[RMDB]
RNA sequence: GGGAACGACUCGAGUAGAGUCGAAAAUAGAUCCAUGCUGUCCUAGUCUUUUGAGAUGUCGAUCUGCUCCAAGACAUCCUAGGCUCUUUUGAGCGACAGCCGCGGAGCAGAUUUUGGAUCUAGAAAAGGGUUUCAGCUAGUUCGCUAGCUGGGACCCAAAAGAAACAACAACAACAAC
Reactivity to 2A3 in 0.01 (KOAc 150mM, MgCl2 10mM, bicine 150mM(pH8.5), 24C), signal-to-noise 9, nucleotides 027 to 126: u040a000g000a000u000c000c000a030u080g020c030u060g020u040c010c030u060a080g070u070c080u040u250u120u130g220a250g000a030u030g030u070c030g020a030u010c020u050g010c010u020c020c010a070a020g020a020c010a030u030c010c020u030a060g040g030c000u010c010u040u250u110u290g040a020g000c030g030a040c060a040g040c030c030g040c080g010g000a010g000c010a000g000a020u100u070u020u040g000g000a000u000c000u000a020g090a020a100a010a020
Reactivity to DMS in 0.01 (KOAc 150mM, MgCl2 10mM, bicine 150mM(pH8.5), 24C), signal-to-noise 9, nucleotides 027 to 126: u010a010g000a010u000c000c000a060u020g010c060u010g010u000c000c030u010a140g010u020c060u010u020u020u020g010a100g000a010u000g000u020c070g010a030u010c010u000g010c000u000c000c010a090a300g000a040c050a060u010c070c070u020a120g000g000c010u000c020u010u020u020u040g000a020g020c030g000a170c100a060g010c060c120g000c300g000g000a010g010c000a010g000a020u000u010u010u000g000g000a000u000c000u000a040g010a040a070a090a100
This 177-nucleotide RNA was probed chemically with 2A3 and DMS. The data come from the RNA Mapping Database (RMDB), library OK1LIB. For 2A3 the reverse transcriptase was SuperScript II with manganese. Values are in units of 0.01, from 0 to 300, in steps of 10.